[RMDB]
RNA sequence: GGGAACGACUCGAGUAGAGUCGAAAAGAGCGGCAGACGGACUGGCCCGAUGAAGCCCGGCAACCUAACUUUAUUUAAGCGUAAAGUGAAGGUGCUAAUUCCAGCAAAAUGGUGUAUUCCGUUUUGGUUUAUCCGCCCUGGUUCGCCAGGGCGGAAAGAAGAGUAGGAUGUUCGCAUCCUACUCUUCAAAAGAAACAACAACAACAAC
Reactivity to DMS in 0.01 (KOAc 150mM, MgCl2 10mM, bicine 150mM(pH8.5), 24C), signal-to-noise 1, nucleotides 027 to 156: g020a130g070c040g020g030c000a060g060a110c070g030g000a090c040u010g010g020c010c020c000g000a230u010g010a060a150g050c010c000c050g000g020c000a110a070c000c000u000a150a000c000u000u010u000a020u020u010u000a110a170g020c240g020u000a020a040a030g040u000g020a130a050g000g010u000g010c050u000a060a090u010u010c000c010a080g000c020a040a050a020a060u010g020g020u000g000u000a150u020u010c010c000g000u000u000u000u020g000g010u000u000u010a130u000c040c030g080c020c000c000u010g000g020u000u010c300g000c000c000a030g000g040g040c000g000g000a000a010a110
Reactivity to 2A3 in 0.01 (KOAc 150mM, MgCl2 10mM, bicine 150mM(pH8.5), 24C), signal-to-noise 1, nucleotides 027 to 156: g090a000g000c110g020g000c030a030g020a070c000g020g000a000c030u070g070g030c030c010c000g040a030u040g090a060a020g010c000c020c010g000g010c040a120a170c010c000u010a010a010c010u040u010u010a060u060u090u120a110a090g180c030g060u010a020a040a000g000u020g060a150a030g000g010u000g000c000u000a040a050u080u000c070c080a000g080c040a030a040a040a040u060g000g000u070g030u110a070u120u090c000c010g010u040u020u060u050g040g010u030u090u210a040u070c010c000g000c000c000c010u000g000g040u090u050c140g080c100c000a000g000g010g000c020g000g030a000a000a000